[RMDB]
RNA sequence: GGGAACGACUCGAGUAGAGUCGAAAAGCAUCUUGGGGUGGAACGAGAGGUUGUCAGCGCCUGCGGGGUGAGAGUGAUGGUGCUAGCAAAUUCUAUCAAUAUCCAUGGGCUGGCUCACAUUGGGUCACCAGCACGCAAAGGAGUGUUUGUCACACUACGUUUAAUCCCUAUUCGUAGGGAUUAAACGAAAAGAAACAACAACAACAAC
Reactivity to DMS in 0.01 (KOAc 150mM, MgCl2 10mM, bicine 150mM(pH8.5), 24C), signal-to-noise 1, nucleotides 027 to 156: g040c100a090u000c090u000u060g020g040g000g030u000g000g000a080a080c050g010a150g020a090g000g030u000u010g010u000c040a040g000c060g010c010c030u010g030c070g020g000g040g030u000g010a090g000a120g000u000g030a080u000g010g050u000g020c020u000a040g020c090a040a060a090u000u010c030u000a210u020c070a030a090u020a120u010c010c020a120u000g030g000g030c030u010g010g000c030u000c030a030c100a140u010u000g030g040g050u010c080a060c030c010a030g010c000a040c040g020c050a090a100a040g030g010a040g000u000g000u010u000u010g010u000c060a060c060a010c010u010a070
Reactivity to 2A3 in 0.01 (KOAc 150mM, MgCl2 10mM, bicine 150mM(pH8.5), 24C), signal-to-noise 5, nucleotides 027 to 156: g020c010a060u070c060u100u090g010g000g000g010u080g030g030a080a050c060g020a030g010a040g140g040u060u070g070u090c040a020g040c040g020c040c020u080g020c060g020g050g020g000u070g010a040g000a000g030u060g010a030u060g010g040u030g020c040u040a010g040c010a050a070a170u170u020c040u070a110u100c040a090a060u050a050u200c030c030a090u050g010g040g010c060u020g010g000c010u030c000a160c010a080u060u220g030g010g000u010c000a000c040c000a000g030c030a030c070g060c060a080a060a050g050g020a050g020u040g000u050u100u050g030u040c000a020c010a010c060u100a020